[RMDB]
An RNA of 177 nucleotides, treated with 2A3 and DMS and read out base by base. The 2A3 profile rests on 429 reads.

RNA sequence: GGGAACGACUCGAGUAGAGUCGAAAAUGGACGUGUACAAAAAUGCGUGUUACGUGAUCAUGAUACUGUCAGAAUUUAUAAACCAUGGCUAACAGCACAUCAGCUUUCAUUGCCGAAGUAUGUCGUCUACACCGACUGGUUUCGACCAGUCGGUGUAAAAAGAAACAACAACAACAAC
Reactivity to 2A3 in 0.01 (KOAc 150mM, MgCl2 10mM, bicine 150mM(pH8.5), 24C), signal-to-noise 2, nucleotides 027 to 126: u130g010g010a000c000g090u150g000u000a130c070a000a000a020a100a080u110g050c060g000u000g030u100u120a050c190g020u000g000a120u070c130a030u050g090a000u140a090c000u020g040u000c050a000g060a160a020u160u270u070a030u050a000a060a000c220c000a100u180g000g000c000u030a020a030c000a030g000c020a000c000a180u140c000a000g100c050u080u090u200c000a060u000u180g150c060c010g030a020a000g050u070a130u200g070u070c000g000u070c000
Reactivity to DMS in 0.01 (KOAc 150mM, MgCl2 10mM, bicine 150mM(pH8.5), 24C), signal-to-noise 1, nucleotides 027 to 126: u030g000g000a120c030g040u000g000u000a070c150a020a090a140a010a100u000g000c010g000u000g010u000u000a020c000g000u030g000a020u000c120a050u010g000a010u000a070c050u000g030u000c080a060g000a130a030u020u020u020a160u000a000a120a190c090c070a030u030g000g010c000u100a070a020c110a050g000c020a040c180a150u060c000a080g000c080u000u000u010c060a120u020u010g000c010c010g000a040a240g000u000a020u000g000u150c020g000u000c000